[RMDB]
RNA sequence: GGGAACGACUCGAGUAGAGUCGAAAAGAUAUGGAUAACUCGAUGAAACAUCGAACGAGUCGGAAACGACGAUGAGUUCAAUGUGGAGAGUUAUCCUAAGUCAAACGAUGGAGUUCGCUCCAUCGAAGAACUUGAACUUCUUCGGAAGUUCAAGUUCAAAAGAAACAACAACAACAAC
Reactivity to DMS in 0.01 (KOAc 150mM, MgCl2 10mM, bicine 150mM(pH8.5), 24C), signal-to-noise 1, nucleotides 027 to 126: g010a070u030a300u000g000g000a010u000a010a000c000u000c000g000a100u010g000a230a080a020c000a000u000c050g000a000a020c000g000a300g000u000c000g030g000a060a060a160c180g000a090c000g010a100u010g010a300g010u010u030c010a000a020u000g020u010g000g000a060g010a000g000u000u000a000u000c010c000u010a010a060g020u010c020a020a030a220c000g010a010u000g000g010a010g000u010u000c200g000c000u010c000c000a000u000c010g010a040a090
Reactivity to 2A3 in 0.01 (KOAc 150mM, MgCl2 10mM, bicine 150mM(pH8.5), 24C), signal-to-noise 1, nucleotides 027 to 126: g000a020u060a060u150g010g000a000u000a000a010c000u000c000g110a150u020g000a000a020a000c000a030u010c000g000a010a000c000g000a030g020u000c040g040g080a300a180a060c200g270a040c010g050a190u110g090a060g030u000u000c010a020a000u030g000u040g020g010a010g020a000g010u000u000a010u000c000c000u000a000a000g010u020c050a090a070a000c020g000a000u000g000g000a000g040u130u070c180g180c100u020c010c010a020u010c000g020a030a040